Chemical mapping of a 177-nucleotide RNA with 2A3 and DMS. Values cover nucleotides 27 to 126. 2A3 adducts were read by reverse transcription with SuperScript II with manganese. For DMS the reverse transcriptase was MarathonRT.
[RMDB]
RNA sequence: GGGAACGACUCGAGUAGAGUCGAAAAGAGCUUAAUGCUAGAUAGUUGUGUAUGGACAUAACCAAUGACUGUUUUACUUGUUAUAAAACAGUUCGCAUGUUCAAUUGGUUAACUAUCUAGCAUCAUAGAUAGUAUACUUAUUCGUGAGUGUGCUAUCAAAAGAAACAACAACAACAAC
Reactivity to 2A3 in 0.01 (KOAc 150mM, MgCl2 10mM, bicine 150mM(pH8.5), 24C), signal-to-noise 9, nucleotides 027 to 126: g090a020g020c080u140u180a060a000u020g000c000u000a000g000a000u000a010g010u010u040g110u040g070u180a130u100g050g010a010c010a030u080a050a060c060c040a090a080u200g010a000c000u000g020u010u020u000u010a040c050u090u150g110u260u160a090u040a080a010a000a000c000a000g000u040u030c050g010c050a020u050g030u030u030c030a080a110u080u070g110g010u130u080a000a000c000u000a000u000c000u000a000g000c000a000u000c000a000u010a010
Reactivity to DMS in 0.01 (KOAc 150mM, MgCl2 10mM, bicine 150mM(pH8.5), 24C), signal-to-noise 9, nucleotides 027 to 126: g010a120g010c080u010u020a100a020u000g000c010u000a010g000a000u000a000g010u000u000g010u020g010u030a090u010g000g000a020c020a030u010a090a130c220c190a110a090u040g000a020c000u000g000u000u000u000u000a010c080u020u030g000u020u030a290u010a000a000a000a000c000a010g010u010u000c120g020c200a020u000g010u000u000c020a040a100u020u020g010g000u020u020a020a000c000u000a000u000c000u000a000g010c010a000u010c090a050u020a090